[RMDB]
RNA sequence: GGGAACGACUCGAGUAGAGUCGAAAAAUCAUACUUGUACAACGCGGACCUGCUGAUGCUUUCUGCGUGCCUUUUCUACGCCUCAGAAAUGAGCGAGAAAGGCUUCAAAGUCAUCUUUGGGAAUGUCGCCAGGACCAAUCUUCGGAUUGGUCCUGGCAAAAGAAACAACAACAACAAC
Reactivity to 2A3 in 0.01 (KOAc 150mM, MgCl2 10mM, bicine 150mM(pH8.5), 24C), signal-to-noise 1, nucleotides 027 to 126: a080u210c090a060u090a140c080u050u050g060u040a150c060a130a000c020g000c000g020g030a070c000c000u030g010c040u090g060a050u040g000c050u030u000u060c070u040g040c000g060u040g030c000c000u120u110u020u230c030u060a290c040g010c040c000u010c000a000g020a050a000a010u040g000a010g030c000g000a000g000a010a000a000g000g020c000u000u040c000a000a000a000g000u060c000a000u000c000u050u000u010g060g010g070a180a100u030g090u060c060